The data come from the RNA Mapping Database (RMDB), library OK2TRN. Chemical mapping of a 177-nucleotide RNA with 2A3 and DMS. The DMS profile rests on 1,444 reads. For DMS the reverse transcriptase was MarathonRT. The RNA was probed in 150 mM KOAc, 10 mM MgCl2 and 150 mM bicine (pH 8.5) at 24 C. For 2A3 the reverse transcriptase was SuperScript II with manganese.

[RMDB]
RNA sequence: GGGAACGACUCGAGUAGAGUCGAAAAAUCUAACAAUAAAACGCCAUCCACGGGACGUUUAAACAGUUUAGGAUGAUUCGUCGCUGUCAUCUUUUUUUAAAGCACGCUCAAUAAGCAACGAAAUUCAGGACUAAAUACGAUUCGUCGUAUUUAGUCCAAAAGAAACAACAACAACAAC
Reactivity to 2A3 in 0.01 (KOAc 150mM, MgCl2 10mM, bicine 150mM(pH8.5), 24C), signal-to-noise 2, nucleotides 027 to 126: a000u080c080u080a130a010c020a120a070u130a140a090a000a000c010g010c040c000a040u020c080c040a060c060g030g010g070a050c010g020u020u060u110a070a050a020c030a010g040u050u100u100a040g060g000a000u040g000a020u020u050c030g030u000c000g040c020u000g000u000c000a040u010c000u080u070u040u010u020u040u160a100a110a000g030c020a000c080g020c040u020c020a050a110u090a240a050g000c020a000a010c010g070a040a010a060u190u100c090a050
Reactivity to DMS in 0.01 (KOAc 150mM, MgCl2 10mM, bicine 150mM(pH8.5), 24C), signal-to-noise 2, nucleotides 027 to 126: a080u010c040u000a060a100c110a100a120u000a090a040a050a030c030g000c010c000a100u010c050c070a050c090g000g010g010a030c010g000u000u000u000a050a060a100c210a090g000u000u000u000a060g000g000a060u000g000a050u000u010c030g030u000c050g000c030u000g020u010c060a040u000c000u000u000u000u000u000u000u000a050a040a060g000c130a020c130g000c070u000c020a110a070u010a040a040g030c030a030a020c010g010a100a030a090u000u000c120a140